Structure probing data (DMS and 2A3) for a 207-nucleotide construct. The DMS profile rests on 8,087 reads. It was measured as part of the RMDB library M2RFOK. The RNA was probed in 150 mM KOAc, 10 mM MgCl2 and 150 mM bicine (pH 8.5) at 24 C. The 2A3 profile rests on 5,188 reads.
RNA sequence: GGGAACGACUCGAGUAGAGUCGAAAAACAUGCUGGCCAACCCAACCCCACGAUCCUCCAUCGGCAUGAUCAUGAUGUGUUCUCAAAUAUCAGGCCAGUAAAUCACCAUGCUCGUGCUGGUAACGGCAACUUAUGCCCAAGUUCGCUUGGGCAUAAAUAAUCAUAACGGAUUCGUCCGUUAUGAUUAAAAAGAAACAACAACAACAAC
Reactivity to DMS in 0.01 (KOAc 150mM, MgCl2 10mM, bicine 150mM(pH8.5), 24C), signal-to-noise 3, nucleotides 027 to 156: a060c050a090u000g030c010u000g020g010c020c010a130a190c060c040c040a110a130c030c010c000c030a080c130g010a100u000c040c030u000c060c040a070u000c020g010g000c030a020u010g000a040u000c030a040u000g010a030u000g020u010g010u000u010c040u010c030a120a090a130u000a120u010c070a100g010g040c000c010a050g030u000a020a050a080u020c030a040c000c010a040u000g000c090u000c030g040u000g010c000u000g010g000u000a080a080c080g040g000c100a060a060c080u000u000a010u010g010c000c010c000a010a030g020u000u010c290g030c000u010u000g010g000g000c000a000u000a000a020a100
Reactivity to 2A3 in 0.01 (KOAc 150mM, MgCl2 10mM, bicine 150mM(pH8.5), 24C), signal-to-noise 6, nucleotides 027 to 156: a010c050a030u080g010c000u010g010g000c000c010a040a040c070c010c060a030a090c040c010c010c020a060c080g070a110u090c030c070u050c030c030a030u020c010g000g020c000a010u010g000a010u010c010a000u010g060a060u110g030u000g020u100u000c060u020c040a100a100a050u260a100u160c080a060g020g010c010c000a000g000u020a000a060a070u110c010a010c020c000a010u010g000c000u010c010g000u000g000c010u010g000g010u020a100a030c040g030g000c010a030a020c030u030u010a000u000g000c000c000c000a020a000g020u050u070c100g010c160u000u010g010g000g000c000a000u000a000a000a000